[RMDB]
RNA sequence: GGGAACGACUCGAGUAGAGUCGAAAAGCAACAUUCCGAGGGGACCGUCCCUCGGUAAUGGCGAAUGGGACCCAGAAAUCUCUCUAGAUUCCCAGAGAGAAUCGAGAGAAAACUGGCUCUCCCUUAGGAUUGCUGAAUAGUUCGCUAUUCAGCAAUCAAAAGAAACAACAACAACAAC
Reactivity to 2A3 in 0.01 (KOAc 150mM, MgCl2 10mM, bicine 150mM(pH8.5), 24C), signal-to-noise 2, nucleotides 027 to 126: g020c020a000a150c000a000u000u000c000c010g010a010g060g010g010g080a200c040c130g300u300c000c000c000u000c000g000g010u010a010a000u000g020g000c030g050a050a040u100g020g010g000a010c010c000c030a000g000a040a300a010u000c000u010c000u010c020u070a090g000a020u000u000c000c000c160a100g070a000g010a010g000a210a000u000c000g000a000g020a010g000a000a020a010a010c000u000g000g000c000u020c000u000c000c000c000u000u030a110g000
Reactivity to DMS in 0.01 (KOAc 150mM, MgCl2 10mM, bicine 150mM(pH8.5), 24C), signal-to-noise 3, nucleotides 027 to 126: g010c050a090a170c030a030u000u000c000c000g000a010g020g010g000g000a110c300c300g010u000c010c000c000u000c000g000g000u010a000a010u010g010g020c110g010a120a110u000g010g000g050a010c300c020c000a020g000a050a090a160u010c010u000c000u000c000u010a190g030a030u000u000c000c010c120a210g010a170g000a180g010a000a000u000c010g000a030g000a010g000a020a030a110a190c010u000g000g010c020u000c060u000c000c020c000u010u000a080g020
Annotation
Structure probing data (2A3 and DMS) for a 177-nucleotide construct. Values cover nucleotides 27 to 126. The 2A3 profile rests on 2,125 reads.